[RMDB]
RNA sequence: GGGAACGACUCGAGUAGAGUCGAAAACGGUUACGCCUUCUUUACCGUUAUCAAGGAAGGUACUCGGCCAUGCUAAGGGAGGCAUUAUUCCUUAGGCGCAUGUCGCCGCCAGCAUGGUGUGAGGGGAAAAAGUAUGCUGGGUUCGCCCAGCAUACAAUCCUUGACGUUCGUUCGCGAACGUCAAGGAAAAAGAAACAACAACAACAAC
Reactivity to 2A3 in 0.01 (KOAc 150mM, MgCl2 10mM, bicine 150mM(pH8.5), 24C), signal-to-noise 1, nucleotides 027 to 156: c010g000g010u010u020a090c030g050c020c010u000u000c000u000u040u100a040c000c010g200u110u060a060u080c030a050a010g020g000a010a000g000g010u030a060c010u010c020g050g000c020c010a000u010g010c000u020a050a050g040g000g040a000g090g060c010a070u090u260a050u170u190c040c050u040u140a010g010g130c020g000c030a170u300g000u300c020g050c010c000g060c050c010a000g010c000a010u020g020g020u090g300u130g020a060g000g000g000g030a000a110a050a000a020g000u010a000u030g030c000u000g000g020g000u000u010c100g140c010c000c000a000g020c000a000u000a000c000a020a000